[RMDB]
RNA sequence: GGGAACGACUCGAGUAGAGUCGAAAACAGAAACCUCUGUGGCUGGUGGUACCUUUGCCUGAGUUUUGUUCGGGCCUGCUGGGCUCAUUCAGCCCUGGCAGGCUGCACUUGGCUCGCACUCUCAGCCUGGAUCCCAUGCCUGCCACGGGUGAGCCAAGCCCUAAAUGCUAUUCGUAGCAUUUAGGGCAAAAGAAACAACAACAACAAC
Reactivity to 2A3 in 0.01 (KOAc 150mM, MgCl2 10mM, bicine 150mM(pH8.5), 24C), signal-to-noise 1, nucleotides 027 to 156: c040a070g110a090a070a040c040c000u060c050u060g000u000g000g010c050u060g050g080u020g020g020u080a100c030c030u110u110u090g030c000c010u040g000a030g030u040u070u140u160g150u170u090c030g000g020g030c000c000u010g000c000u010g020g000g010c000u010c120a100u220u170c120a050g000c020c040c000u060g040g000c000a000g030g030c000u000g030c000a010c000u040u060g020g020c030u030c060g000c090a090c020u010c010u020c030a010g030c000c000u000g000g000a060u080c000c030c010a020u130g020c010c040u050g000c010c040a030c080g020g050g000u040g000a000g020c000c030a090a000
The record gives the reactivity of an RNA of 207 nucleotides to 2A3. The data come from the RNA Mapping Database (RMDB), library OK3TST. 2A3 adducts were read by reverse transcription with SuperScript II with manganese. The RNA was probed in 150 mM KOAc, 10 mM MgCl2 and 150 mM bicine (pH 8.5) at 24 C. Values cover nucleotides 27 to 156.